[RMDB]
Conditions: 150 mM KOAc, 10 mM MgCl2 and 150 mM bicine (pH 8.5), 24 C. Chemical mapping of a 177-nucleotide RNA with 2A3 and DMS. The 2A3 profile rests on 591 reads. The DMS profile rests on 832 reads. The data come from the RNA Mapping Database (RMDB), library OK2TRN.

RNA sequence: GGGAACGACUCGAGUAGAGUCGAAAACACUUCUGCAGCUUAGGAUAUAAGGAUUCUCAAAUAAUCGCAAUGCCCAUGCCUCGAGUUUAUUUGUCAAACUUGAAUACAAAGAUUCAUCUUUACUGUAUCAGGAGGACAGAUUCGUCUGUCCUCCUGAAAAAGAAACAACAACAACAAC
Reactivity to 2A3 in 0.01 (KOAc 150mM, MgCl2 10mM, bicine 150mM(pH8.5), 24C), signal-to-noise 1, nucleotides 027 to 126: c010a000c020u060u080c000u160g000c000a040g010c000u080u070a030g000g010a040u000a050u050a250a070g040g010a080u110u000c090u000c110a120a110a090u180a010a030u130c090g000c140a070a030u050g000c010c000c000a010u060g040c020c010u000c010g010a030g030u040u180u020a120u080u100u140g100u020c010a020a050a010c040u000u070g000a090a000u140a110c040a010a210a020g080a050u100u060c020a010u000c050u060u110u110a200c060u020g030u000a040
Reactivity to DMS in 0.01 (KOAc 150mM, MgCl2 10mM, bicine 150mM(pH8.5), 24C), signal-to-noise 1, nucleotides 027 to 126: c110a060c080u020u000c000u010g020c070a150g010c060u000u000a060g000g000a040u020a080u000a040a060g010g000a050u000u020c020u000c100a040a030a020u010a100a060u010c120g020c030a050a050u010g010c000c010c020a030u010g020c030c010u000c020g010a030g010u020u000u000a050u000u000u020g010u000c140a020a070a040c080u010u020g010a020a060u020a080c180a180a040a070g000a100u010u000c060a020u010c050u000u000u010a060c120u000g020u000a190